[RMDB]
Structure probing data (DMS and 2A3) for a 177-nucleotide construct. For DMS the reverse transcriptase was MarathonRT. Source: RMDB library OK1LIB, as collected in RNAgym. The RNA was probed in 150 mM KOAc, 10 mM MgCl2 and 150 mM bicine (pH 8.5) at 24 C. 2A3 adducts were read by reverse transcription with SuperScript II with manganese.
RNA sequence: GGGAACGACUCGAGUAGAGUCGAAAAGAAGUGGCAGGGACAUGCCCCACAAGCUCGUUCUAGCAACAUAUGUUUGGCUAGUUCGAGCGAUUAGUCUGGAGGAGCGUCCUCUCGCCUGUUCACGAGAGACUGAUAGGACUUUCGAGUCCUAUCAGUCAAAAGAAACAACAACAACAAC
Reactivity to DMS in 0.01 (KOAc 150mM, MgCl2 10mM, bicine 150mM(pH8.5), 24C), signal-to-noise 3, nucleotides 027 to 126: g000a100a060g010u000g000g010c040a060g010g030g000a050c080a110u020g030c020c020c000c050a020c070a090a150g020c000u010c020g010u000u000c000u000a000g010c000a040a040c040a190u040a180u040g030u020u010u000g000g000c020u000a000g000u000u000c000g010a000g000c010g010a010u020u010a070g010u050c130u000g040g000a150g020g000a140g000c090g010u010c000c010u000c020u050c140g020c000c000u020g010u020u020c030a110c090g010a130g010a190
Reactivity to 2A3 in 0.01 (KOAc 150mM, MgCl2 10mM, bicine 150mM(pH8.5), 24C), signal-to-noise 6, nucleotides 027 to 126: g110a110a020g100u050g030g000c010a020g000g000g000a040c050a120u200g050c000c000c000c000a060c000a030a010g000c000u010c000g000u000u000c000u000a000g010c010a050a070c050a080u270a090u300g220u100u080u100g150g030c020u010a010g010u000u000c000g010a000g000c000g000a000u000u050a050g060u020c080u070g030g020a110g030g000a060g080c060g100u030c020c000u000c000u020c070g000c000c000u020g090u140u180c050a040c050g070a090g000a000